[RMDB]
RNA sequence: GGGAACGACUCGAGUAGAGUCGAAAACUAACACUCAGCUUCAAAAUAGACUACUUUUCACUUAUAUUCAUACCAGUAGCACUAUUCAUUACAUGGUCCAUUAUAGAAUUCUCAAUAUGGUAUAUACGUCUACCUAAUGAUUCGUCAUUAGGUAGACAAAAGAAACAACAACAACAAC
Reactivity to DMS in 0.01 (KOAc 150mM, MgCl2 10mM, bicine 150mM(pH8.5), 24C), signal-to-noise 3, nucleotides 027 to 126: c050u020a090a060c110a070c070u010c040a050g010c030u020u000c090a050a070a060a060u030a040g010a200c020u000a040c010u000u000u020u010c050a090c100u040u010a090u040a070u020u000c120a040u020a110c050c050a070g010u020a060g000c120a020c090u000a020u000u000c070a070u000u030a050c130a030u050g000g000u000c020c040a050u020u020a040u020a110g000a050a090u020u000c040u000c030a090a090u040a020u010g000g010u010a060u000a070u020a130c150
Reactivity to 2A3 in 0.01 (KOAc 150mM, MgCl2 10mM, bicine 150mM(pH8.5), 24C), signal-to-noise 9, nucleotides 027 to 126: c010u040a060a010c030a030c040u090c030a050g060c030u110u110c080a090a110a060a090u080a050g050a070c020u040a020c010u110u070u100u100c090a060c090u180u090a090u070a070u300u120c090a050u060a140c020c040a030g030u050a010g030c060a050c150u040a040u080u060c050a060u080u150a070c040a080u080g070g020u010c020c000a020u070u070a060u040a120g130a070a080u140u010c050u010c030a060a100u100a070u130g020g060u030a050u000a020u010a200c080
Chemical mapping of a 177-nucleotide RNA with DMS and 2A3. DMS adducts were read by reverse transcription with MarathonRT. Reactivities are given for positions 27 through 126. The RNA was probed in 150 mM KOAc, 10 mM MgCl2 and 150 mM bicine (pH 8.5) at 24 C.